[RMDB]
This 177-nucleotide RNA was probed chemically with DMS. Conditions: 150 mM KOAc, 10 mM MgCl2 and 150 mM bicine (pH 8.5), 24 C.
RNA sequence: GGGAACGACUCGAGUAGAGUCGAAAAUCAGACCUGGCGAGGAUGGAGAUACCCCUAUCACAAGAAGGCGAUAACUGGGCGGAUUCGGGCGUCAGAGAUGAAGCUCAGCAAAGGCGAACCCACCGAGCCUGAGUAAGGGUUUCGACCCUUACUCAGGAAAAGAAACAACAACAACAAC
Reactivity to DMS in 0.01 (KOAc 150mM, MgCl2 10mM, bicine 150mM(pH8.5), 24C), signal-to-noise 1, nucleotides 027 to 126: u020c050a110g000a070c060c000u010g020g020c020g030a060g010g010a070u000g020g010a000g020a190u010a090c050c020c000c060u000a060u000c080a100c060a050a200g010a070a120g000g000c020g020a090u000a070a120c060u010g000g050g000c030g000g000a140u010u020c100g020g010g000c020g050u000c090a030g000a160g000a040u000g000a300a230g030c010u000c060a040g030c070a020a030a070g010g010c020g000a070a120c000c000c000a080c040c050g010a120g010